RNA sequence: GGGAACGACUCGAGUAGAGUCGAAAACAGUAUGCCUUCGGGCAUACUGAAACCAGAGGGUUUCUGGCCCACGCUCCCAUGCGUGCCGGGAAUCCCAUCCCAAAACGGAUGUCUUCGGACAUCCGAAGAUGAAGACUAGCUUCGGCUAGUCUUCAUCAAAAGAAACAACAACAACAAC
Reactivity to DMS in 0.01 (KOAc 150mM, MgCl2 10mM, bicine 150mM(pH8.5), 24C), signal-to-noise 1, nucleotides 027 to 126: c020a010g000u000a010u010g010c000c000u000u030c270g030g000g030c020a000u010a000c000u000g030a000a050a100c100c080a130g010a110g010g010g000u000u000u000c000u010g000g020c150c220c290a000c020g000c010u000c220c120c170a090u000g010c000g000u000g010c000c000g000g000g000a010a020u000c000c010c030a060u000c000c020c000a040a040a110a180c010g000g000a020u000g000u000c000u000u010c190g010g010a010c000a000u010c010c000g020a010a000
Reactivity to 2A3 in 0.01 (KOAc 150mM, MgCl2 10mM, bicine 150mM(pH8.5), 24C), signal-to-noise 2, nucleotides 027 to 126: c000a000g010u000a010u010g000c010c000u030u110c240g150g010g000c000a000u020a000c000u000g000a050a000a000c070c000a030g220a240g070g000g000u030u000u020c010u000g020g000c050c190c000a000c000g000c000u280c010c050c040a040u210g020c000g000u020g000c010c000g000g000g020a000a020u020c030c000c000a050u000c020c010c040a030a070a010a020c010g000g000a000u010g000u000c010u040u050c280g140g000a000c000a000u000c000c000g000a000a010
Structure probing data (DMS and 2A3) for a 177-nucleotide construct. Values cover nucleotides 27 to 126. The reactions ran in a buffer of 150 mM KOAc, 10 mM MgCl2 and 150 mM bicine (pH 8.5), at 24 C. DMS adducts were read by reverse transcription with MarathonRT. The 2A3 profile rests on 2,316 reads.